[RMDB]
This 170-nucleotide RNA was probed chemically with DMS and 2A3. The reactions ran in a buffer of 150 mM KOAc, 10 mM MgCl2 and 150 mM bicine (pH 8.5), at 24 C. DMS adducts were read by reverse transcription with MarathonRT. Reactivities are given for positions 27 through 129. It was measured as part of the RMDB library 15KLIB.
RNA sequence: GGGAACGACUCGAGUAGAGUCGAAAACAACUGUUAUCUUGCCACUGCAUUGUUAACACUCCAACAAAUAGAGUUGAAGUUUAAUCCACCUGCUCUACAAAGGGCUGGUGAAGCUGCCAACUUUUGUCCAGACUAAACUUCGGUUUAGUCAAAAGAAACAACAACAACAAC
Reactivity to DMS in 0.01 (KOAc 150mM, MgCl2 10mM, bicine 150mM(pH8.5), 24C), signal-to-noise 9, nucleotides 027 to 129: c040a070a060c160u000g000u010u000a020u010c040u040u000g000c020c210a090c170u020g050c040a000u040u030g000u000u000a080a000c070a090c030u070c000c010a080a060c160a080a100a060u030a070g000a000g040u000u000g000a110a040g040u000u030u060a090a080u000c130c020a010c000c010u000g000c000u020c020u000a110c300a060a130a070g040g010g030c010u000g020g030u000g020a020a020g020c020u000g040c120c010a020a000c020u010u010u000u020g030u050c070c070a090
Reactivity to 2A3 in 0.01 (KOAc 150mM, MgCl2 10mM, bicine 150mM(pH8.5), 24C), signal-to-noise 9, nucleotides 027 to 129: c020a000a030c040u040g010u070u040a060u070c030u020u060g030c030c090a140c150u180g000c020a040u060u100g030u050u030a040a020c010a020c060u030c020c030a040a040c040a050a190a080u190a050g050a010g020u000u010g010a030a010g010u010u070u190a090a080u060c030c010a000c000c010u020g000c000u000c000u040a140c090a080a230a080g000g000g000c000u020g000g000u000g000a010a010g000c010u030g050c050c000a010a010c000u030u030u030u080g090u010c030c030a030